The record gives the reactivity of an RNA of 177 nucleotides to 2A3. It was measured as part of the RMDB library OK1LIB. The RNA was probed in 150 mM KOAc, 10 mM MgCl2 and 150 mM bicine (pH 8.5) at 24 C. The 2A3 profile rests on 1,508 reads. Values cover nucleotides 27 to 126.
RNA sequence: GGGAACGACUCGAGUAGAGUCGAAAAUUGAGGCGGGCGGGUUGCGAGGGCGGGGCUUCCCUUAUUGUUCGGGAGCCUGAGCAAUACGCUGUUUCUUGCUCGUAAGAAUUCGAGGCUAGUUGGCCAAAACUCCCGGGACAUUCGUGUUUUGGGGGUUAAAAGAAACAACAACAACAAC
Reactivity to 2A3 in 0.01 (KOAc 150mM, MgCl2 10mM, bicine 150mM(pH8.5), 24C), signal-to-noise 1, nucleotides 027 to 126: u120u170g020a090g090g120c120g030g040g120c160g050g000g030u160u230g110c100g070a240g000g070g000c170g030g010g010g020c030u130u120c010c000c030u090u170a190u120u160g070u080u100c040g010g020g020a060g020c000c000u030g020a020g000c010a000a010u060a090c080g030c060u000g050u020u040u000c010u020u010g000c000u000c010g020u040a030a060g050a170a080u130u110c060g010a020g000g020c010u030a040g110u100u120g050g010c010c030a040a010